[RMDB]
RNA sequence: GGGAACGACUCGAGUAGAGUCGAAAAAGAGAAAACCAAGGGUGUGGCCAAAUGACUGUUUGGCAAGGAGAUUAGUACGGAUAAAAGGAAGCCAGGGGCUAUAUACAUCAAGACAAUAGGAGAAUGACCUCAAAGACACUUGAGAGAGGUUCAAGGAAUGAUGCACUAAUUUCGAUUAGUGCAUCAUAAAAGAAACAACAACAACAAC
Reactivity to DMS in 0.01 (KOAc 150mM, MgCl2 10mM, bicine 150mM(pH8.5), 24C), signal-to-noise 1, nucleotides 027 to 156: a080g030a050g020a130a110a080a230c050c020a090a040g060g010g010u000g050u000g020g000c010c020a060a080a120u010g030a130c090u010g000u000u000u000g050g020c030a070a060g010g030a080g000a070u030u010a050g000u000a170c000g000g000a110u000a100a060a100a100g010g020a030a070g020c090c110a040g050g010g010g000c080u000a050u000a050u020a050c030a140u000c070a050a000g000a090c050a030a090u000a020g020g000a080g000a080a120u000g010a080c020c020u020c030a100a060a150g000a050c070a070c080u000u000g000a150g000a200g020a030g030g020u010u000c050a070a040g030g000a180
Reactivity to 2A3 in 0.01 (KOAc 150mM, MgCl2 10mM, bicine 150mM(pH8.5), 24C), signal-to-noise 2, nucleotides 027 to 156: a000g090a010g000a020a040a020a020c030c060a050a080g060g020g020u030g010u010g150g050c010c010a090a070a000u070g050a060c040u080g050u130u000u050g020g060c000a010a010g030g040a040g000a010u080u000a080g040u070a030c040g020g000a010u080a110a130a080a010g000g020a000a000g000c000c010a030g020g000g000g010c000u020a000u020a000u030a060c100a040u120c010a090a000g010a040c020a020a040u070a080g060g000a010g030a060a110u100g030a030c000c010u060c040a010a140a020g060a070c110a010c130u120u060g000a040g010a010g000a000g050g000u010u070c000a020a020g030g010a050